Source information:
The record gives the reactivity of an RNA of 207 nucleotides to DMS and 2A3. The reactions ran in a buffer of 150 mM KOAc, 10 mM MgCl2 and 150 mM bicine (pH 8.5), at 24 C. The data come from the RNA Mapping Database (RMDB), library OK3TST.

RNA sequence: GGGAACGACUCGAGUAGAGUCGAAAACUACCAGAAAAACGGAUAUAGCGAGCACGAUUAUAAAUUGGUUGAUAAACAACCAAAUGUAACGGCAAAGGAAAUCAUUCGCGAUCACCUUAAAUAGCACGAAUUGCUAAAACUUGCGCAAGGCCAUUUGUAUACUGACAUGGUUCGCCAUGUCAGUAUAAAAAGAAACAACAACAACAAC
Reactivity to DMS in 0.01 (KOAc 150mM, MgCl2 10mM, bicine 150mM(pH8.5), 24C), signal-to-noise 2, nucleotides 027 to 156: c030u000a300c040c020a200g000a070a060a070a060a130c080g010g000a070u000a070u000a070g030c050g010a070g030c090a130c050g000a100u000u000a080u000a060a130a190u000u000g010g010u000u000g000a140u010a140a110a230c030a010a020c000c000a010a030a110u030g030u000a060a060c100g020g010c040a070a030a100g010g000a120a090a070u000c020a110u000u010c170g040c000g000a050u000c050a080c040c060u000u010a040a030a150u010a040g040c000a020c060g010a020a090u000u000g010c000u000a020a070a060a070c070u000u000g030c020g020c040a040a090g000g040c060c010a220u010u020u010g010
Reactivity to 2A3 in 0.01 (KOAc 150mM, MgCl2 10mM, bicine 150mM(pH8.5), 24C), signal-to-noise 3, nucleotides 027 to 156: c030u040a050c020c010a030g160a050a080a000a000a000c060g000g020a020u060a020u060a140g050c040g000a020g020c070a020c120g050a070u090u030a050u050a100a200a070u040u020g000g030u000u000g030a200u130a210a100a060c010a000a000c000c000a000a000a010u050g030u020a080a010c020g020g020c090a080a050a030g100g020a040a040a050u040c040a050u060u130c050g000c020g070a020u020c020a080c040c000u040u040a100a110a040u040a060g010c020a020c110g110a110a100u090u060g000c000u050a080a080a070a040c040u070u140g020c040g030c070a020a010g030g000c020c010a040u070u050u100g020